[RMDB]
Conditions: 150 mM KOAc, 10 mM MgCl2 and 150 mM bicine (pH 8.5), 24 C. This 207-nucleotide RNA was probed chemically with 2A3 and DMS. Source: RMDB library M2RFPK, as collected in RNAgym. Reactivities are given for positions 27 through 156.
RNA sequence: GGGAACGACUCGAGUAGAGUCGAAAACGAGGUGCGGUAGGCCUCGUUAACAAACCGCAAAAAAAUAGUCGCAAACGACGAAAACUACGCACUCGCAGCUUAAGAACCUGCGCUGAGCCCUUCUCCCAAAACUGAGGUAGGUUCGCCUACCUCAGAACUAGUCUAACUUGUUCGCAAGUUAGACUAGAAAAGAAACAACAACAACAAC
Reactivity to 2A3 in 0.01 (KOAc 150mM, MgCl2 10mM, bicine 150mM(pH8.5), 24C), signal-to-noise 5, nucleotides 027 to 156: c000g000a000g040g010u090g020c060g040g060u080a040g030g020c000c010u010c010g030u010u010a020a010c020a000a040a040c010c020g000c040a050a080a010a000a010a020a140u190a030g010u030c020g020c110a090a140a120c070g050a010c000g060a050a020a010a040c050u100a030c030g010c040a030c020u040c010g020c010a020g000c010u100u080a160a020g020a060a050c010c000u010g000c010g020c120u040g040a030g010c020c000c000u080u040c050u050c020c010c000a030a060a060a080c010u000g000a000g010g000u000a000g000g030u010u050c100g040c000c000u000a000c000c010u010c000a000g000a000a000
Reactivity to DMS in 0.01 (KOAc 150mM, MgCl2 10mM, bicine 150mM(pH8.5), 24C), signal-to-noise 2, nucleotides 027 to 156: c020g000a020g000g080u040g020c060g030g000u010a140g000g040c000c040u000c010g010u000u000a000a170c070a040a180a180c040c000g000c060a010a010a000a050a090a160a170u020a060g000u000c010g020c040a090a160a150c060g020a020c010g000a080a040a100a080c010u010a060c030g000c010a120c110u000c000g060c020a110g000c040u000u010a160a170g000a080a100c200c000u020g020c040g000c050u010g000a070g030c040c000c050u040u000c040u040c000c020c010a040a040a060a140c020u010g000a020g000g000u000a000g010g000u000u000c210g030c020c000u000a000c000c020u000c000a000g000a000a120